[RMDB]
This 177-nucleotide RNA was probed chemically with 2A3 and DMS. For 2A3, 2,195 sequencing reads were counted. The DMS profile rests on 4,103 reads. 2A3 adducts were read by reverse transcription with SuperScript II with manganese. Reactivities are rounded to 0.1 and cut off at 0 and 3. Conditions: 150 mM KOAc, 10 mM MgCl2 and 150 mM bicine (pH 8.5), 24 C.
RNA sequence: GGGAACGACUCGAGUAGAGUCGAAAAAGUCACCUAUCUGGUGGUCACAUCUGCCCCUGGGCUCAUCCUUUUACUGGGCCACCUCGGCCCAUCGGGACCUGUCAGUCCUUGACCUCCCUCAGGCCCCGUUACAUGCAUUGUUCGCAAUGCAUGUAACAAAAGAAACAACAACAACAAC
Reactivity to 2A3 in 0.01 (KOAc 150mM, MgCl2 10mM, bicine 150mM(pH8.5), 24C), signal-to-noise 2, nucleotides 027 to 126: a020g070u070c060a050c030c010u110a190u200c190u120g020g000u020g060g030u150c050a060c010a200u070c090u090g020c020c000c030c020u050g010g000g000c030u010c010a090u090c010c020u050u070u100u070a120c100u070g010g000g020c000c010a100c020c080u100c070g000g000c000c000c010a010u060c010g000g000g030a020c010c020u070g090u120c050a030g050u040c050c000u040u090g040a070c000c000u000c020c020c030u030c040a010g020g140c010c020c000c000
Reactivity to DMS in 0.01 (KOAc 150mM, MgCl2 10mM, bicine 150mM(pH8.5), 24C), signal-to-noise 4, nucleotides 027 to 126: a100g000u000c070a050c030c020u000a120u010c130u010g010g010u000g000g000u000c080a070c140a080u000c070u010g000c030c010c000c050u010g000g000g020c060u000c080a090u000c030c030u000u000u000u000a060c240u000g000g000g020c010c010a070c170c120u010c150g010g010c010c000c020a020u000c040g010g020g000a040c060c030u000g010u020c100a090g000u000c040c030u000u010g000a130c080c050u000c030c010c030u010c080a100g010g000c020c010c010c150